Chemical mapping of a 207-nucleotide RNA with 2A3. The data come from the RNA Mapping Database (RMDB), library ARCHII. The reactions ran in a buffer of 150 mM KOAc, 10 mM MgCl2 and 150 mM bicine (pH 8.5), at 24 C.
RNA sequence: GGGAACGACUCGAGUAGAGUCGAAAAAGCACAGCAAGAGCAACCCGUGAUGGAGGCGACUGGGAUUACACUUGUCCUCGUAUAAGGGAUUUAUCCCUUCGUUGUGGGCGUGAAUCUCAUCCUAUGGAAUGUGAAGAUACUAGAACCCUGUCAUAUUGUUCAAUUGAAGGUUCGCCUUCAAUUGAACAAAAGAAACAACAACAACAAC
Reactivity to 2A3 in 0.01 (KOAc 150mM, MgCl2 10mM, bicine 150mM(pH8.5), 24C), signal-to-noise 1, nucleotides 027 to 156: a000g030c040a060c050a030g050c040a090a000g000a010g110c010a030a130c040c000c110g030u140g030a130u050g000g080a060g000g000c040g020a010c100u020g000g000g000a010u020u070a040c000a010c050u070u210g000u020c020c020u030c020g000u100a100u000a090a000g020g000g000a000u040u140u040a180u100c010c010c050u030u030c120g060u120u130g030u060g000g000g000c000g020u060g020a020a010u000c060u000c050a050u130c010c000u040a070u180g030g050a080a060u030g020u030g050a020a020g030a010u070a050c030u040a030g070a040a030c000c030c000u030g100u110c030a070u030a150u220u050